[RMDB]
RNA sequence: GGGAACGACUCGAGUAGAGUCGAAAAGAAGAAAGAUGACUAUGGAAGGAAUGUACCUGUGUGCCGAUUUUAGUCAAAGUACUUUUUUGUACGAAAAGUCGUGCAUAGGAUUGUGUGAAACACAAAAGGGAUUUGAUAACUUCGGUUAUCAAAUCCCAAAAGAAACAACAACAACAAC
Reactivity to DMS in 0.01 (KOAc 150mM, MgCl2 10mM, bicine 150mM(pH8.5), 24C), signal-to-noise 1, nucleotides 027 to 126: g070a100a070g010a070a000a090g000a070u000g000a010c000u000a050u030g020g000a040a010g010g000a010a000u020g010u010a080c010c000u010g000u000g010u010g020c120c030g000a000u000u000u000u060a300g000u010c050a040a030a050g000u000a100c220u020u010u000u010u000u000g020u010a010c000g000a030a040a000a010g000u000c000g010u020g020c000a020u000a050g000g010a120u020u000g040u000g000u000g000a030a020a050c000a030c040a040a020a050a180
Reactivity to 2A3 in 0.01 (KOAc 150mM, MgCl2 10mM, bicine 150mM(pH8.5), 24C), signal-to-noise 3, nucleotides 027 to 126: g060a020a010g050a020a060a000g070a140u120g020a060c010u060a060u040g040g020a020a010g030g020a120a050u130g030u160a100c010c000u000g010u000g010u010g130c110c060g010a000u000u000u010u010a070g000u030c030a040a010a000g100u160a290c270u130u160u120u000u130u100g020u190a010c010g000a040a000a000a000g030u030c010g020u020g000c020a000u010a000g000g050a060u100u120g010u000g010u010g080a140a050a000c000a000c000a010a040a070a020
Description:
This 177-nucleotide RNA was probed chemically with DMS and 2A3. As a SHAPE reagent, 2A3 marks flexible, mostly unpaired nucleotides at the ribose 2'-OH. It was measured as part of the RMDB library OK1LIB. The DMS profile rests on 1,817 reads. The RNA was probed in 150 mM KOAc, 10 mM MgCl2 and 150 mM bicine (pH 8.5) at 24 C.